[RMDB]
RNA sequence: GGGAACGACUCGAGUAGAGUCGAAAACAGUUAUCUACCGAGGAACGACUUUCGCUGAAGGUGUCGUUGCAUUUCUGAUACUGCCCCAAGCUAAGAAGGACUUCUUCAGCUCACACCCCUUGAGAGAGGCUUUGAGAGCAUUCGUGCUCUCAAAGCCAAAAGAAACAACAACAACAAC
Reactivity to 2A3 in 0.01 (KOAc 150mM, MgCl2 10mM, bicine 150mM(pH8.5), 24C), signal-to-noise 1, nucleotides 027 to 126: c000a030g000u160u150a090u080c020u000a040c040c060g040a050g090g000a210a000c030g060a040c030u150u250u110c170g030c140u080g140a060a080g140g000u060g020u060c000g000u000u010g070c060a010u000u180u000c090u040g000a020u020a150c030u090g010c000c000c000c000a130a000g000c000u120a110a000g020a040a020g040g060a180c060u170u010c000u020u000c060a010g000c000u040c000a060c030a030c040c000c000c000u060u080g020a040g000a000g000a010

Notes:
This 177-nucleotide RNA was probed chemically with 2A3. The 2A3 profile rests on 493 reads. Reactivities are given for positions 27 through 126. Conditions: 150 mM KOAc, 10 mM MgCl2 and 150 mM bicine (pH 8.5), 24 C.